Description:
The data come from the RNA Mapping Database (RMDB), library OK2TRN. The record gives the reactivity of an RNA of 177 nucleotides to DMS. For DMS, 886 sequencing reads were counted. Values cover nucleotides 27 to 126. The RNA was probed in 150 mM KOAc, 10 mM MgCl2 and 150 mM bicine (pH 8.5) at 24 C.
[RMDB]
RNA sequence: GGGAACGACUCGAGUAGAGUCGAAAAGUAAGAUGAUGCGGAGUUAUGCACCAAUUUUAUGGGAUGACACCCUUGCAUUUUGGUGAUCUUAGCAAUCAGGCCAAACCAGAGACUCCUACUAAAUAGAAAGGGAUGUUACUUUCGAGUAACAUCCCUUAAAAGAAACAACAACAACAAC
Reactivity to DMS in 0.01 (KOAc 150mM, MgCl2 10mM, bicine 150mM(pH8.5), 24C), signal-to-noise 1, nucleotides 027 to 126: g000u000a120a100g000a070u000g010a060u000g000c040g000g000a020g000u010u000a070u030g040c000a010c000c000a000a020u010u000u000u010a110u030g000g020g020a090u000g010a240c190a140c010c010c030u000u000g030c270a070u000u000u000u000g010g020u000g000a030u000c010u020u000a110g020c020a040a080u010c040a080g040g020c060c030a040a080a070c060c080a030g010a260g010a080c020u000c040c010u000a040c060u020a010a110a130u020a110g040a130